[RMDB]
RNA sequence: GGGAACGACUCGAGUAGAGUCGAAAACUAUGCUAUAAUACCUGCUCUUCGAGAUCCCAGUCUAACUAUGAUCAUCGCCCGACGGGGCGAGAUAGUCGUGGGUUCCCUUUCUGGAGGGAGAGGGAAUUCCACGUUGACCGGGGGAACCGGCCAGGCCCACAAUUAGCGCGUUCGCGCGCUAAUUGUGAAAAGAAACAACAACAACAAC
Reactivity to 2A3 in 0.01 (KOAc 150mM, MgCl2 10mM, bicine 150mM(pH8.5), 24C), signal-to-noise 1, nucleotides 027 to 156: c050u090a070u240g060c030u070a060u160a240a200u080a190c010c010u020g080c020u020c050u230u240c040g030a080g040a090u000c010c000c000a010g010u000c040u020a030a050c010u010a020u150g040a050u060c050a030u010c070g040c000c000c000g210a250c130g090g000g000g010c000g000a000g000a000u040a010g070u030c000g000u010g010g000g000u000u000c010c000c000u000u020u010c050u090g140g110a210g030g040g000a000g010a000g000g000g060a000a000u300u000c000c000a000c000g000u010u060g010a010c010c000g040g110g000g030g000a020a030c000c000g000g000c020c020a010g000g030c020c030
This 207-nucleotide RNA was probed chemically with 2A3. The RNA was probed in 150 mM KOAc, 10 mM MgCl2 and 150 mM bicine (pH 8.5) at 24 C. For 2A3, 672 sequencing reads were counted. For 2A3 the reverse transcriptase was SuperScript II with manganese.